RNA sequence: GGGAACGACUCGAGUAGAGUCGAAAAGGAGCUCGGCAUGCUCUAAAUCCUAGGAAGAGCAUGCGUACGCUCUUCCUUACCACCAGAGCGUACCGAUGUGUUGGUGGUAUUGUGACACAUCAGUGAGGGCACAACAGGAUAUUGCUCUUACCGAGCACGUGACCACAAUGUUCGCAUUGUGGUUGCGAAAAGAAACAACAACAACAAC
Reactivity to DMS in 0.01 (KOAc 150mM, MgCl2 10mM, bicine 150mM(pH8.5), 24C), signal-to-noise 2, nucleotides 027 to 156: g050g000a050g020c010u000c060g010g040c000a060u000g010c000u010c000u000a040a060a130u000c060c040u000a160g020g010a110a030g000a010g030c000a030u000g010c070g040u010a040c100g030c010u010c010u000u000c010c010u010u000a070c060c040a050c010c050a190g030a090g000c020g030u000a120c050c050g020a070u000g030u000g020u000u000g010g030u000g010g010u000a050u000u000g020u000g000a160c040a070c030a050u000c030a070g020u000g000a060g010g050g000c050a090c070a070a220c100a160g000g020a180u000a090u000u000g000c000u010c030u000u000a050c050c030g010a020g030c060a190
Reactivity to 2A3 in 0.01 (KOAc 150mM, MgCl2 10mM, bicine 150mM(pH8.5), 24C), signal-to-noise 4, nucleotides 027 to 156: g060g000a030g000c010u010c030g040g010c010a000u010g000c000u010c000u010a100a060a020u060c020c020u040a040g070g060a030a010g000a000g000c010a010u060g020c010g010u030a000c030g000c000u000c000u000u010c000c000u000u010a010c010c000a010c000c000a010g000a000g040c030g000u030a080c020c050g070a080u040g030u000g000u000u040g000g030u010g020g010u020a010u010u090g000u030g020a020c000a010c000a090u050c020a020g000u000g050a040g000g030g000c010a020c010a060a070c040a030g100g010a040u040a040u070u090g000c000u000c000u000u020a040c000c050g000a010g010c010a010
Chemical mapping of a 207-nucleotide RNA with DMS and 2A3. Reactivities are rounded to 0.1 and cut off at 0 and 3. For 2A3, 5,489 sequencing reads were counted. For DMS the reverse transcriptase was MarathonRT. Reactivities are given for positions 27 through 156. The reactions ran in a buffer of 150 mM KOAc, 10 mM MgCl2 and 150 mM bicine (pH 8.5), at 24 C. It was measured as part of the RMDB library OK3TST.